[RMDB]
RNA sequence: GGGAACGACUCGAGUAGAGUCGAAAAGCCCGUUCCGCUGCAGGGAGCAGAGAAACCUGGGCUGCCCAGAGGUAGGCGCUGCCCCUGAGUACACGUCCUGCUCUCAGGGGGCAGCCAGCGUGGGCACCCCAGUAGCCAUGUUCGCAUGGCUACUGGGAAAAGAAACAACAACAACAAC
Reactivity to DMS in 0.01 (KOAc 150mM, MgCl2 10mM, bicine 150mM(pH8.5), 24C), signal-to-noise 3, nucleotides 027 to 126: g010c000c000c010g010u010u000c080c010g020c030u000g020c030a130g020g010g000a130g000c030a020g000a110g000a080a090a070c030c050u000g020g030g000c070u000g010c000c000c040a090g010a120g010g010u010a080g030g020c120g010c040u000g020c010c000c000c010u010g010a050g010u010a060c060a050c200g000u020c170c070u000g010c000u000c010u010c040a080g000g020g010g000g020c010a050g010c040c020a040g000c030g010u000g010g010g030c040a120c170
Reactivity to 2A3 in 0.01 (KOAc 150mM, MgCl2 10mM, bicine 150mM(pH8.5), 24C), signal-to-noise 2, nucleotides 027 to 126: g020c010c000c000g020u090u000c050c020g020c020u020g050c010a000g030g090g070a070g050c010a010g050a000g070a080a130a030c020c040u030g030g040g000c040u020g000c000c000c020a040g040a070g030g070u140a040g060g090c080g000c080u020g000c010c020c010c010u010g000a010g030u100a010c040a010c130g070u080c050c000u040g010c040u010c010u000c000a020g000g040g000g020g020c010a000g000c000c010a010g000c000g050u060g020g030g000c020a050c010